Source information
Structure probing data (DMS) for a 177-nucleotide construct. Source: RMDB library RFM100, as collected in RNAgym. The DMS profile rests on 1,397 reads. For DMS the reverse transcriptase was MarathonRT.
[RMDB]
RNA sequence: GGGAACGACUCGAGUAGAGUCGAAAACGUGUUUCGUCCCUGGGUUAGCCGGGACCUAAGCCGAGGCCGAGAGGCGUAGGCGAUGGACAUCAGGUUAAUAAUCCUGAGCUCGCAACCCUUAAACUGGGGGGAUGAAGAAUUUCGAUUCUUCAUCCCCAAAAGAAACAACAACAACAAC
Reactivity to DMS in 0.01 (KOAc 150mM, MgCl2 10mM, bicine 150mM(pH8.5), 24C), signal-to-noise 2, nucleotides 027 to 126: c130g000u010g080u000u000u000c010g000u000c030c020c020u040g110g000g010u000u000a000g130c110c050g080g000g000a300c040c000u000a010a200g010c000c000g000a270g000g030c000c090g000a110g010a220g000g000c000g000u000a270g000g010c000g000a060u050g000g000a170c090a060u000c000a000g000g000u030u030a150a060u060a170a060u020c000c000u060g000a050g030c040u000c000g000c120a060a050c000c000c020u000u040a030a020a160c140u010g000g000